[RMDB]
RNA sequence: GGGAACGACUCGAGUAGAGUCGAAAAGCUCUGAGAGACAGAUCGAACAACAAAGAGAGAUCGAAAAUCUUAGGGGAGAGAACGAAUCGGUCGUCUUCUCUAGGACAUUGUCGAUCAGAUGUCCAAAGACCAUUGAUUGGUUCGCCAAUCAAUGGUCAAAAGAAACAACAACAACAAC
Reactivity to DMS in 0.01 (KOAc 150mM, MgCl2 10mM, bicine 150mM(pH8.5), 24C), signal-to-noise 2, nucleotides 027 to 126: g010c020u000c000u020g000a000g010a300g000a000c010a180g000a050u000c000g010a300a200c040a140a060c300a060a130a050g000a050g030a300g000a000u030c000g000a000a040a060a300u000c000u000u000a020g000g000g030g000a000g000a040g010a050a010c050g010a090a170u070c060g000g070u000c040g000u040c000u000u020c000u000c000u000a000g000g010a000c110a060u010u000g000u000c000g010a160u060c000a010g000a020u020g000u000c010c010a110a040a110
Reactivity to 2A3 in 0.01 (KOAc 150mM, MgCl2 10mM, bicine 150mM(pH8.5), 24C), signal-to-noise 4, nucleotides 027 to 126: g030c000u010c010u000g000a000g000a000g000a010c000a030g020a020u030c010g070a020a050c040a100a050c070a000a300a000g070a010g010a000g010a000u000c000g000a020a060a020a040u000c020u010u020a010g000g000g020g000a010g000a000g030a080a030c040g040a090a140u300c160g070g040u000c000g120u010c020u010u010c000u000c000u000a010g010g000a000c030a110u080u120g030u020c010g000a020u000c000a000g010a030u040g060u000c000c000a040a020a010